The record gives the reactivity of an RNA of 177 nucleotides to 2A3 and DMS. Source: RMDB library OK1LIB, as collected in RNAgym. DMS adducts were read by reverse transcription with MarathonRT. The reactions ran in a buffer of 150 mM KOAc, 10 mM MgCl2 and 150 mM bicine (pH 8.5), at 24 C. For 2A3, 5,214 sequencing reads were counted. 2A3 adducts were read by reverse transcription with SuperScript II with manganese. The DMS profile rests on 5,015 reads.

RNA sequence: GGGAACGACUCGAGUAGAGUCGAAAAGCUCGGAGACGAGCAAGGCUGACAAAACAAUGUCCCAACCUCCACGUGGUGUCGGCUGGAUAAUGCUGCAUUAUGUUGCAUUUAUCAACUGGGAAGAAAAAAAUGGAGGCUAUUUCGAUAGCCUCCAUUUAAAAGAAACAACAACAACAAC
Reactivity to 2A3 in 0.01 (KOAc 150mM, MgCl2 10mM, bicine 150mM(pH8.5), 24C), signal-to-noise 6, nucleotides 027 to 126: g010c000u000c000g010g040a110g030a050c000g000a000g000c010a010a040g020g000c010u010g010a010c020a020a110a050a010c040a050a150u060g060u060c000c000c000a010a040c010c010u040c020c020a090c090g070u120g000g010u030g000u020c000g020g020c010u020g050g000a000u020a030a010u010g020c030u020g000c020a080u070u160a130u300g030u030u020g000c000a010u060u080u040a040u020c010a010a030c040u050g020g050g030a080a030g060a050a090a030a030
Reactivity to DMS in 0.01 (KOAc 150mM, MgCl2 10mM, bicine 150mM(pH8.5), 24C), signal-to-noise 3, nucleotides 027 to 126: g000c000u000c000g000g020a160g000a200c000g000a030g000c000a010a100g020g020c010u000g020a010c010a110a140a070a130c140a110a070u040g000u010c000c000c000a100a090c030c010u000c030c020a100c130g000u010g000g000u010g000u000c010g010g020c030u000g000g020a020u010a010a000u000g000c000u010g020c010a090u040u040a080u020g030u000u000g000c000a010u010u010u030a030u000c000a050a060c130u010g010g000g000a140a070g040a000a020a030a020

Description: Reactivities are given for positions 27 through 126.